[RMDB]
RNA sequence: GGGAACGACUCGAGUAGAGUCGAAAAUUAGCAGUACACUACACACUGCUAAAACUAGGUAUUCAGGAGAGCGAAUUUGAUGAAUGCUGCGUAUUCUUCGCGAAUGGAGAUGAUCUAUUACUGGCAAAUACGUGGAAACAUUCGUGUUUCCACGUAUAAAAGAAACAACAACAACAAC
Reactivity to 2A3 in 0.01 (KOAc 150mM, MgCl2 10mM, bicine 150mM(pH8.5), 24C), signal-to-noise 9, nucleotides 027 to 126: u020u000a000g000c020a000g020u100a040c150a070c210u230a040c140a020c030a000c070u000g000c000u020a000a020a010a010c050u060a060g070g010u040a040u030u050c020a020g070g030a060g070a020g090c090g110a140a170u110u110u130g100a100u070g020a050a040u050g020c030u030g000c010g010u030a080u070u020c020u050u050c030g010c060g110a080a070u100g030g020a030g020a020u170g030a040u020c020u030a070u080u110a100c050u020g090g000c040a100a080
Reactivity to DMS in 0.01 (KOAc 150mM, MgCl2 10mM, bicine 150mM(pH8.5), 24C), signal-to-noise 6, nucleotides 027 to 126: u010u000a000g000c030a010g030u010a070c170a110c160u040a110c300a130c180a020c010u000g000c000u020a010a000a110a110c100u000a130g010g000u000a070u010u010c010a020g000g030a090g020a070g010c120g030a090a100u010u020u010g010a140u020g020a040a050u020g000c000u000g010c060g010u010a080u010u020c040u000u000c050g020c070g000a060a050u000g000g000a030g000a110u030g010a100u000c040u000a030u010u020a080c090u030g010g010c130a060a060